An RNA of 177 nucleotides, treated with 2A3 and DMS and read out base by base. 2A3 adducts were read by reverse transcription with SuperScript II with manganese. For DMS the reverse transcriptase was MarathonRT. The DMS profile rests on 7,908 reads. For 2A3, 2,421 sequencing reads were counted.

[RMDB]
RNA sequence: GGGAACGACUCGAGUAGAGUCGAAAAUAAGAAGUGCAAAACCAGGGUUUGGAUUACGUGUAAACCAUGUAAUCUUUGAGAUUUGUGAAUGUGCAGGUAUCAAAGAUCUGAGUGGGAAAGUAUAUAAGACUAUAGUCCUGUUCGCAGGACUAUAGUCAAAAGAAACAACAACAACAAC
Reactivity to 2A3 in 0.01 (KOAc 150mM, MgCl2 10mM, bicine 150mM(pH8.5), 24C), signal-to-noise 4, nucleotides 027 to 126: u300a030a010g100a040a020g050u100g050c020a000a050a000a090c020c010a040g040g040g010u050u130u120g050g030a040u020u010a030c050g010u030g040u140a030a070a050c090c010a020u020g050u060a030a030u020c000u000u030u070g050a060g010a040u020u040u070g050u050g090a270a170u110g020u140g070c010a030g010g000u030a010u070c060a040a000a030g020a010u030c030u130g030a060g050u060g030g030g030a050a090a000g050u010a030u010a010u020a220a050
Reactivity to DMS in 0.01 (KOAc 150mM, MgCl2 10mM, bicine 150mM(pH8.5), 24C), signal-to-noise 4, nucleotides 027 to 126: u050a060a110g010a080a090g010u010g010c050a040a060a050a100c070c050a090g000g000g020u010u020u030g010g010a070u010u000a020c070g010u010g000u040a120a120a160c180c020a000u000g000u020a060a010u000c000u000u000u010g000a030g000a020u000u000u000g030u000g010a090a100u030g030u030g000c010a030g000g000u000a020u000c030a000a020a030g000a030u010c090u020g000a170g020u010g010g000g000a060a050a060g010u010a040u010a090u020a100a140